[RMDB]
RNA sequence: GGGAACGACUCGAGUAGAGUCGAAAAGAAAGAAAGAAAUGAGUUUUCUGCGACUGACGGAUUAUUGCAGAGCACUGCAAGGGAACAGAAAAACUCUGUUUCAGCCGACCGUCUGGGCACACCUGAAUCACGACCGGAAGCUUCGGCUUCCGGUCAACAUUUGUUCUACGUUCGCGUAGAACAAAUGAAAAGAAACAACAACAACAAC
Reactivity to 2A3 in 0.01 (KOAc 150mM, MgCl2 10mM, bicine 150mM(pH8.5), 24C), signal-to-noise 2, nucleotides 027 to 156: g060a010a040a000g060a030a100a020g060a030a130a050u170g010a070g080u050u030u010u070c050u050g050c020g080a210c070u070g010a000c000g030g020a060u060u100a080u220u000g010c000a000g020a080g170c080a070c280u010g010c000a000a010g010g000g000a010a000c000a000g010a010a110a040a050a080c010u020c010u010g000u000u020u010c050a060g050c010c090g060a040c020c000g010u010c020u020g010g040g000c010a020c010a010c020c040u060g040a090a070u150c040a050c170g000a000c010c000g020g000a000a000g010c010u060u080c210g050g000c020u000u000c030c000g000g000u000c000a000a000
Reactivity to DMS in 0.01 (KOAc 150mM, MgCl2 10mM, bicine 150mM(pH8.5), 24C), signal-to-noise 2, nucleotides 027 to 156: g000a150a040a140g030a060a110a160g010a050a080a130u020g020a100g000u000u000u010u010c020u000g030c030g010a140c040u000g010a050c010g000g000a220u000u010a030u000u000g010c010a010g000a180g000c190a100c030u000g010c000a070a140g030g020g010a050a040c000a040g010a060a140a090a110a090c120u040c000u020g020u000u000u020c010a100g000c090c080g010a050c020c010g000u000c010u000g050g000g010c010a050c020a070c080c040u030g010a070a090u000c100a080c080g000a030c000c000g000g000a040a050g030c020u010u000c300g070g000c000u010u000c000c000g000g000u000c000a010a020